This 177-nucleotide RNA was probed chemically with 2A3 and DMS.
For DMS, 14,754 sequencing reads were counted.
The reactions ran in a buffer of 150 mM KOAc, 10 mM MgCl2 and 150 mM bicine (pH 8.5), at 24 C.
RNA sequence: GGGAACGACUCGAGUAGAGUCGAAAAAGGUUGAACAUGGUGGACUUGCCCGCCCCGUUCGGCCCGAUGAGGCCCACGAUUUCGCCCGCGUUGACAUCGAAGCUCACGUCGUUGACGGCCUUGAGCCGAACGAUAGAGGUUUCGACCUCUAUCGUUCAAAAGAAACAACAACAACAAC
Reactivity to 2A3 in 0.01 (KOAc 150mM, MgCl2 10mM, bicine 150mM(pH8.5), 24C), signal-to-noise 5, nucleotides 027 to 126: a000g030g000u020u010g000a010a010c020a030u090g040g030u070g020g020a090c060u140u180g080c010c000c000g020c000c000c000c010g010u010u020c010g010g010c000c030c000g050a110u140g050a050g060g020c000c020c020a040c020g050a060u080u120u100c070g020c000c010c010g030c030g050u070u120g050a040c030a080u070c070g050a060a020g000c010u010c020a040c040g010u040c030g050u070u090g080a090c050g000g010c020c010u040u110g030a020g000c000c040
Reactivity to DMS in 0.01 (KOAc 150mM, MgCl2 10mM, bicine 150mM(pH8.5), 24C), signal-to-noise 8, nucleotides 027 to 126: a040g010g020u000u000g000a040a030c030a140u000g010g020u010g010g010a120c130u000u010g010c080c010c020g010c010c010c150c060g020u000u000c030g010g010c010c000c030g000a110u010g000a130g010g010c020c010c040a100c110g000a110u000u000u000c080g010c020c020c030g010c080g010u000u000g010a070c100a080u000c060g000a110a110g010c030u000c030a080c260g000u000c040g010u000u000g000a120c070g000g000c020c030u010u000g000a100g010c040c070